[RMDB]
RNA sequence: GGGAACGACUCGAGUAGAGUCGAAAAACUUUUAGCGAUUAUCGUUAUAGAAAUGUCCUUGGCAUAUCGCUAAGCACAGAGGUAUUAGUAGCGCAAUAGCUAUUGAAGGACAUUACCUCUCAAAUAACAUUCUUUAGUCCUUCGGGACUAAAGAAUGAAAAGAAACAACAACAACAAC
Reactivity to DMS in 0.01 (KOAc 150mM, MgCl2 10mM, bicine 150mM(pH8.5), 24C), signal-to-noise 2, nucleotides 027 to 126: a060c090u000u000u000u000a020g000c000g000a020u010u010a030u010c110g030u000u010a110u010a100g000a050a110a030u000g000u010c020c000u000u000g000g000c080a020u000a000u000c010g030c010u010a010a050g020c220a100c230a040g010a020g010g040u000a000u000u000a010g010u000a010g010c000g010c150a110a110u010a190g000c020u000a000u000u000g020a020a050g000g000a060c010a010u000u000a020c000c000u000c010u000c220a060a060a080u000a030a180
Reactivity to 2A3 in 0.01 (KOAc 150mM, MgCl2 10mM, bicine 150mM(pH8.5), 24C), signal-to-noise 2, nucleotides 027 to 126: a000c020u100u090u000u060a000g050c000g020a040u140u080a040u170c120g000u070u080a170u070a170g080a050a100a050u110g050u040c020c010u030u060g050g020c040a020u000a010u050c000g000c010u010a010a000g050c080a040c050a130g040a000g040g000u020a000u110u030a110g020u010a000g020c040g000c060a110a280u060a080g000c010u020a010u030u030g040a030a020g030g040a000c000a030u000u040a010c000c000u000c020u030c050a040a130a080u130a100a000

This 177-nucleotide RNA was probed chemically with DMS and 2A3. Reactivities are given for positions 27 through 126. The DMS profile rests on 1,402 reads. The data come from the RNA Mapping Database (RMDB), library M2PK90. As a SHAPE reagent, 2A3 marks flexible, mostly unpaired nucleotides at the ribose 2'-OH.